[RMDB]
RNA sequence: GGGAACGACUCGAGUAGAGUCGAAAAGGGAGACCCGAGCAGAGGCAUAGCGAACUGCGCACGGAGAAGCCUUGAGGGAAAGCCGUAGGACCCGGGUUCGAUUCCCGGCCGCUCCACCGAAGGGCCAGCCUGACUACGAGUUCGCUCGUAGUCAGGCAAAAGAAACAACAACAACAAC
Reactivity to DMS in 0.01 (KOAc 150mM, MgCl2 10mM, bicine 150mM(pH8.5), 24C), signal-to-noise 1, nucleotides 027 to 126: g000g000g090a070g070a090c010c040c000g010a170g060c260a160g000a170g000g010c240a070u060a060g000c060g000a130a070c000u000g000c040g040c160a100c300g000g000a070g160a170a040g000c000c000u000u010g000a200g000g000g000a110a110a180g000c000c090g000u000a200g000g000a180c300c130c000g090g000g000u000u070c140g000a300u010u040c010c000c060g050g000c090c000g000c000u000c140c030a300c040c040g040a120a160g000g000g010c100c040a110
Reactivity to 2A3 in 0.01 (KOAc 150mM, MgCl2 10mM, bicine 150mM(pH8.5), 24C), signal-to-noise 1, nucleotides 027 to 126: g000g000g000a110g060a130c030c040c010g000a060g000c040a020g020a080g070g040c080a110u230a050g040c020g040a090a010c060u050g000c000g050c030a000c060g040g010a130g030a090a030g030c000c000u030u020g060a030g050g000g000a000a150a000g040c080c000g050u040a040g000g090a040c010c000c000g000g000g000u060u040c080g030a040u040u050c000c010c000g000g000c010c000g000c000u050c000c030a010c020c040g000a000a040g010g000g020c000c000a010